RNA sequence: GGGAACGACUCGAGUAGAGUCGAAAAGCGCGAAGACUUGCAGCGUUGCUUGCUUGGUGAAGUCCUUGCUUGCUUCGCACAGAAAGUCAUCUUCUGUAUGAAGAUAGCUUGUCGAAAGCGCGAAGAAGGGAUUUGUUUACUUCGGUAAACAAAUCCCAAAAGAAACAACAACAACAAC
Reactivity to 2A3 in 0.01 (KOAc 150mM, MgCl2 10mM, bicine 150mM(pH8.5), 24C), signal-to-noise 3, nucleotides 027 to 126: g000c000g000c020g110a040a020g000a000c000u040u070g010c070a060g000c000g000u000u000g000c000u010u020g000c000u000u000g060g010u090g180a120a010g140u130c000c000u000u020g000c000u000u010g000c000u000u010c000g060c020a030c030a040g200a010a110a000g050u150c080a030u010c000u020u000c010u010g200u090a150u300g060a000a000g040a030u060a020g000c000u020u040g010u020c000g020a190a120a000g000c000g010c020g020a060a000g060a050a080
Reactivity to DMS in 0.01 (KOAc 150mM, MgCl2 10mM, bicine 150mM(pH8.5), 24C), signal-to-noise 1, nucleotides 027 to 126: g000c010g080c000g010a180a280g050a010c040u000u000g080c000a230g050c010g020u000u000g000c000u000u020g000c030u000u000g000g010u010g000a030a180g040u080c040c000u000u000g000c030u020u040g010c000u000u000c000g080c040a160c070a130g080a110a000a050g000u010c100a040u040c010u010u010c000u000g000u010a110u010g000a000a010g000a000u000a130g000c010u000u050g000u000c010g020a110a040a300g080c030g000c000g030a100a140g010a030a090
Structure probing data (2A3 and DMS) for a 177-nucleotide construct. It was measured as part of the RMDB library OK1LIB. The 2A3 profile rests on 1,378 reads. The reactions ran in a buffer of 150 mM KOAc, 10 mM MgCl2 and 150 mM bicine (pH 8.5), at 24 C. DMS (dimethyl sulfate) methylates the pairing face of unpaired adenines and cytosines. As a SHAPE reagent, 2A3 marks flexible, mostly unpaired nucleotides at the ribose 2'-OH.